[RMDB]
RNA sequence: GGGAACGACUCGAGUAGAGUCGAAAACUGCAGUGAUGAGCCUUAAGUGACUGAUCUGGUAUUGCUUUUUCCUUUCUUGGGGAGAGCUCUGACCAGGGAAUGAUCUCGACUUAAUCUUCUCUCUGAGCAGAAAUCAUUACCCUUCGGGGUAAUGAAAUGUUCUUAUAAGCUUCGGCUUAUAAGAACAAAAAGAAACAACAACAACAAC
Reactivity to 2A3 in 0.01 (KOAc 150mM, MgCl2 10mM, bicine 150mM(pH8.5), 24C), signal-to-noise 4, nucleotides 027 to 156: c020u030g000c000a030g020u020g050a100u030g000a020g030c020c030u040u040a040a010g010u030g050a060c050u040g010a040u060c010u020g010g020u010a020u010u020g010c010u030u050u040u050u080c020c000u150u190u250c110u250u260g020g000g000g000a010g010a010g020c000u000c010u030g170a020c000c000a010g020g010g040a040a130u120g060a090u020c030u040c070g080a040c000u010u020a020a020u050c030u070u010c010u000c000u000c020u040g060a020g050c030a010g060a060a090a020u030c000a000u010u010a000c000c010c000u000u030c250g030g000g000g000u000a000a000u000g000a000a010a010
Reactivity to DMS in 0.01 (KOAc 150mM, MgCl2 10mM, bicine 150mM(pH8.5), 24C), signal-to-noise 2, nucleotides 027 to 156: c020u010g020c040a170g050u000g010a070u010g010a040g020c110c060u010u000a080a150g020u010g020a300c240u000g000a120u000c030u000g030g010u000a030u000u030g000c000u000u000u000u000u000c000c010u000u000u000c200u020u010g070g030g030g010a020g010a160g030c030u000c020u000g000a010c020c000a060g000g000g010a150a060u000g000a080u010c030u010c060g010a040c040u010u000a060a040u010c010u000u000c100u000c030u000c020u000g000a140g000c030a060g000a090a100a200u000c000a010u010u000a020c010c000c010u000u000c300g040g000g010g020u000a000a000u000g000a010a040a090

Structure probing data (2A3 and DMS) for a 207-nucleotide construct. For 2A3 the reverse transcriptase was SuperScript II with manganese. The 2A3 profile rests on 4,167 reads. Values cover nucleotides 27 to 156.